Chemical mapping of a 177-nucleotide RNA with 2A3 and DMS. The RNA was probed in 150 mM KOAc, 10 mM MgCl2 and 150 mM bicine (pH 8.5) at 24 C. The data come from the RNA Mapping Database (RMDB), library OK1LIB. For 2A3 the reverse transcriptase was SuperScript II with manganese.
RNA sequence: GGGAACGACUCGAGUAGAGUCGAAAAGGUGAGGAUGGAAUAGUUGACUGUGAUAAGACAAUUGAUUUUGCGUCAGGUAUCACUGGAAUCUCAAGAUCUGAGAUUGCAACAGCAUCUACCGGUGUUACACUCGGGCUAGGUUCGCCUAGCCCGAGUGAAAAGAAACAACAACAACAAC
Reactivity to 2A3 in 0.01 (KOAc 150mM, MgCl2 10mM, bicine 150mM(pH8.5), 24C), signal-to-noise 2, nucleotides 027 to 126: g110g010u180g100a020g000g100a050u050g030g090a150a120u050a230g030u100u050g120a150c000u010g020u000g000a000u000a070a000g040a000c110a080a050u210u000g170a120u080u300u090u140g060c110g000u100c010a010g100g190u000a050u100c000a000c000u000g000g130a030a040u000c000u000c000a130a160g030a220u040c070u070g040a000g000a060u000u020g000c000a080a090c030a000g130c000a000u000c040u000a000c000c000g000g000u140g030u040u140a110
Reactivity to DMS in 0.01 (KOAc 150mM, MgCl2 10mM, bicine 150mM(pH8.5), 24C), signal-to-noise 2, nucleotides 027 to 126: g010g020u040g010a020g000g000a070u000g010g030a160a100u080a100g000u000u000g000a300c040u000g020u000g010a000u000a010a130g000a000c030a060a220u020u030g020a070u020u000u010u000g000c300g010u040c020a200g020g020u000a000u050c010a000c000u000g000g030a040a090u010c000u000c010a060a070g010a160u010c190u020g000a020g020a050u000u000g050c010a020a100c060a110g000c020a000u000c020u000a150c040c000g010g000u010g010u040u000a180